Notes: Structure probing data (2A3) for a 307-nucleotide construct. For 2A3, 894 sequencing reads were counted. 2A3 adducts were read by reverse transcription with SuperScript II with manganese.
RNA sequence: GGGAACGACUCGAGUAGAGUCGAAAAAAGACUAUACUCGAACAGAAUCAGUUCUAUAGUAUAAUCUCCUCUGUCUGUACUACACAAGUCAGACAACCCUUCCAACUUUGGUGACGAGAAGAGGUCCAGUCACGGAAACGUGACAUAUGCACUUCCUUCCUAUUCCGAGCCCUUCGGAGCCCGGUGGAAGAGUGCUGGAAGACCGUCCCCCUCAGGAGUGCCCUCGUGGCCGAUGAAGGGUGAGUGACAUGGACGGACAGAAAAGUUCGUACGUCUUCGGACGUACGAAAAGAAACAACAACAACAAC
Reactivity to 2A3 in 0.01 (KOAc 150mM, MgCl2 10mM, bicine 150mM(pH8.5), 24C), signal-to-noise 1, nucleotides 027 to 266: a000a030g000a010c040u020a040u030a050c020u000c110g040a070a040c070a060g300a160a140u240c030a030g020u020u000c020u020a190u300a110g060u150a030u100a110a090u110c100u050c030c040u030c000u020g010u020c010u000g070u090a300c050u100a020c140a040c050a150a260g020u030c010a020g050a230c050a000a010c010c020c000u020u020c000c150a240a190c140u130u170u190g000g000u040g070a000c010g000a000g010a250a110g130a020g080g010u100c100c040a010g000u060c000a000c020g050g030a080a090a020c010g020u000g010a010c020a010u140a020u070g030c000a020c010u100u120c050c000u010u010c010c010u080a170u100u140c000c000g020a010g040c000c000c020u170u130c110g120g030a060g020c010c010c020g040g010u040g000g000a000a000g010a020g100u000g040c010u020g090g110a070a060g000a020c000c000g050u060c010c030c030c010c000u080c010a010g030g110a190g040u150g010c020c010c000u000c020g010u020g060g000c000c020g040a090u140g000a000a000g000g020g000u000g030a000g040u050g000a020c030a090u020g010g000a000c000g010g000a010c000a000g010a060a040a000a000g010u030u030
Conditions: 150 mM KOAc, 10 mM MgCl2 and 150 mM bicine (pH 8.5), 24 C.